This 207-nucleotide RNA was probed chemically with DMS and 2A3. The data come from the RNA Mapping Database (RMDB), library M2RFPK. 2A3 is a SHAPE reagent: it acylates the 2'-hydroxyl of flexible nucleotides of all four kinds.
RNA sequence: GGGAACGACUCGAGUAGAGUCGAAAAGACGUAAUCCGCGCAAAUCCACAAACGCCAACGAUGAGCGUUUCGCUGUAGCCGCUUAAGGCAACAGCCGGGGCCGCCUGCGCCCUGUUACCAAAGACGGGAAACUCGAUGCCAUUCGUGGCAUCGAGAACAAAUCGUAUGUGUUCGCACAUACGAUUUGAAAAGAAACAACAACAACAAC
Reactivity to DMS in 0.01 (KOAc 150mM, MgCl2 10mM, bicine 150mM(pH8.5), 24C), signal-to-noise 2, nucleotides 027 to 156: g000a130c050g020u000a110a120u000c010c070g000c020g020c120a120a080a140u000c020c040a070c050a020a280a010c030g000c000c030a080a190c090g010a130u000g000a090g000c000g010u000u000u000c070g000c020u000g020u000a080g010c010c000g010c190u000u010a080a130g030g010c000a060a010c000a030g010c000c000g020g010g060g050c020c040g030c030c020u000g000c070g010c010c030c000u000g000u010u000a130c120c090a020a070a060g000a180c030g000g000g000a170a120a130c000u000c000g010a020u020g050c000c000a060u000u000c270g000u000g000g020c000a000u000c010g000a000g010a030a120
Reactivity to 2A3 in 0.01 (KOAc 150mM, MgCl2 10mM, bicine 150mM(pH8.5), 24C), signal-to-noise 5, nucleotides 027 to 156: g040a010c020g020u050a070a070u070c070c040g000c010g000c080a080a090a120u100c090c040a110c090a130a070a010c050g010c020c020a120a070c150g110a130u160g040a050g060c020g000u020u060u090c030g000c010u000g000u030a050g000c010c010g070c200u250u260a120a090g000g000c000a020a010c000a000g000c000c020g020g000g000g000c020c090g040c010c000u000g000c010g010c000c000c000u020g060u060u090a060c020c000a020a000a010g070a090c010g000g000g000a040a030a020c000u010c000g000a000u000g010c010c000a020u080u050c190g060u080g000g000c000a000u000c000g000a000g000a000a000